[RMDB]
RNA sequence: GGGAACGACUCGAGUAGAGUCGAAAACGGAAGCAUUAAAACCAUUCGAGCUAGUCCAUGCGUGGCGUGUCUCUCCGCAGCGUGUUGGCGAAUGUAAAGAGUGACUAAGCAUGUAGUACCGAGGAUGAUAAGAGCAAUUCGUUCGCGAAUUGCUCAACUAUCUAUAAAGGUUCGCCUUUAUAGAUAGAAAAGAAACAACAACAACAAC
Reactivity to 2A3 in 0.01 (KOAc 150mM, MgCl2 10mM, bicine 150mM(pH8.5), 24C), signal-to-noise 9, nucleotides 027 to 156: c020g030g030a060a000g030c040a050u080u120a070a050a030a070c050c020a030u050u070c050g030a030g060c050u090a030g080u040c010c010a020u040g010c040g070u030g060g000c020g010u060g050u030c030u010c010u000c090c010g010c020a020g020c010g010u050g060u080u070g020g000c030g030a060a010u090g020u100a050a070a030g040a020g010u020g010a020c030u040a040a030g050c030a040u080g040u110a040g030u030a060c030c040g000a030g050g010a030u100g020a020u100a200a110g000a000g000c000a000a000u000u010c000g020u030u060c180g000c000g100a000a000u000u000g000c000u000c000a000a000
Reactivity to DMS in 0.01 (KOAc 150mM, MgCl2 10mM, bicine 150mM(pH8.5), 24C), signal-to-noise 5, nucleotides 027 to 156: c060g000g010a130a110g030c040a120u000u000a040a110a110a130c050c000a100u000u000c040g020a170g020c040u000a110g000u000c020c010a090u010g010c050g050u010g000g050c040g000u000g000u000c060u000c030u000c110c040g030c010a080g010c030g030u010g010u000u010g030g020c020g020a060a060u000g020u000a060a080a130g000a090g030u010g010a090c030u010a080a130g020c040a070u000g000u000a100g010u000a050c030c050g000a130g010g000a090u000g000a110u000a070a110g010a030g010c010a000a020u010u000c010g020u000u010c300g040c050g000a020a030u000u000g010c000u000c010a000a090